[RMDB]
RNA sequence: GGGAACGACUCGAGUAGAGUCGAAAAUUCACACGCUGCCAGAUGGUUUCGGUGAUGAACGGAAUGAUCGGAUGCGCGAGGCGCAGCAGACCUUCCAGUACAGUCACCAGCGUAUGGCGAGUACCGACAUCCACUCGCACUUCGGUGCGAGUGGAUGAAAAGAAACAACAACAACAAC
Reactivity to 2A3 in 0.01 (KOAc 150mM, MgCl2 10mM, bicine 150mM(pH8.5), 24C), signal-to-noise 1, nucleotides 027 to 126: u050u010c030a030c000a000c110g060c000u050g000c000c000a030g030a170u160g130g120u060u140u190c140g000g010u010g000a000u050g010a030a010c000g000g070a050a020u070g100a250u000c020g000g300a000u020g010c000g000c100g230a180g200g070c000g000c000a020g000c030a000g000a010c000c000u000u000c000c040a050g010u160a040c030a030g100u010c000a000c000c000a000g040c030g010u050a030u030g010g000c030g000a000g000u000a030c010c020g000a050
Reactivity to DMS in 0.01 (KOAc 150mM, MgCl2 10mM, bicine 150mM(pH8.5), 24C), signal-to-noise 1, nucleotides 027 to 126: u000u000c050a060c080a060c070g000c020u010g000c000c010a180g000a070u000g000g010u000u000u010c160g000g020u000g000a010u000g000a150a070c030g010g000a070a020u000g010a080u010c000g000g040a160u010g020c010g040c000g010a190g020g050c000g040c000a020g000c020a110g010a010c010c050u000u000c010c000a090g000u000a040c110a240g000u000c000a020c040c000a080g040c010g040u000a040u000g010g020c090g000a070g030u010a160c100c020g000a160
The record gives the reactivity of an RNA of 177 nucleotides to 2A3 and DMS. Reactivities are given for positions 27 through 126. It was measured as part of the RMDB library OK2TST. As a SHAPE reagent, 2A3 marks flexible, mostly unpaired nucleotides at the ribose 2'-OH. The 2A3 profile rests on 1,254 reads. DMS adducts were read by reverse transcription with MarathonRT.